[RMDB]
RNA sequence: GGGAACGACUCGAGUAGAGUCGAAAACAAGAGAGAAACUCCGUCCCAAAAAAAGAUAUCAGGUAACUUGUUCAGGGUUGCACAACUAAUUAUCAGUGGAGCUCUACUGAGUUAAAUAGAGUUUAAGAUCUGGUAAGGAAGGAGGAGAAACAUUGCACGGUAAUUAUUACUUCGGUAAUAAUUACCGAAAAGAAACAACAACAACAAC
Reactivity to 2A3 in 0.01 (KOAc 150mM, MgCl2 10mM, bicine 150mM(pH8.5), 24C), signal-to-noise 1, nucleotides 027 to 156: c050a060a030g040a010g010a000g010a070a110a060c050u000c000c000g080u000c000c000c000a040a080a060a000a000a020a100g080a040u130a030u080c040a020g050g000u050a050a050c010u090u060g020u110u080c050a000g020g030g020u010u050g040c040a030c010a050a010c050u080a030a160u120u090a010u070c030a000g020u020g110g050a010g010c000u020c000u030a040c020u030g070a090g100u140u110a000a070a000u090a020g000a000g010u020u080u080a080a030g040a060u030c000u020g000g010u060a030a040g020g020a020a050g030g000a000g000g000a010g130a030a040a000c020a080u120u200g020c100a030
Reactivity to DMS in 0.01 (KOAc 150mM, MgCl2 10mM, bicine 150mM(pH8.5), 24C), signal-to-noise 2, nucleotides 027 to 156: c030a090a100g000a110g010a160g000a180a120a070c010u010c020c040g000u010c000c010c040a000a000a060a130a050a130a190g010a180u000a050u000c050a090g010g010u000a040a040c020u000u020g010u000u020c120a150g030g010g010u000u010g010c040a100c060a070a080c040u000a070a060u000u000a060u000c010a000g010u000g000g010a170g030c040u000c020u020a020c000u010g020a120g020u000u000a040a060a060u020a020g010a040g020u000u000u010a100a180g040a110u000c020u020g020g010u000a020a040g000g000a060a090g040g000a090g020g020a090g010a120a080a080c070a070u010u000g030c040a160